[RMDB]
RNA sequence: GGGAACGACUCGAGUAGAGUCGAAAAGUGCGCUAUUUCGAUAGCGCACAAAGGCGGCGAGUCUCGCUCGGCGGCGCGCGACAGCGCCCAGCGCAGCCGGAACAUAACGCCACUUCGGUGGCGUUAAUUAAUUGGUCCGAUUCGUCGGACCAAUUAAAAAAGAAACAACAACAACAAC
Reactivity to DMS in 0.01 (KOAc 150mM, MgCl2 10mM, bicine 150mM(pH8.5), 24C), signal-to-noise 2, nucleotides 027 to 126: g020u010g000c000g020c000u010a000u000u000u010c130g020a010u000a020g010c000g020c010a000c000a000a020a100g000g010c010g000g000c020g010a030g020u000c030u000c010g020c010u000c170g000g010c020g000g020c150g030c000g020c070g010a140c250a110g010c020g010c010c040c060a070g060c010g000c010a020g020c000c000g020g020a090a040c130a190u000a020a010c000g010c010c000a000c010u000u030c190g000g020u010g000g000c000g000u000u000a000a060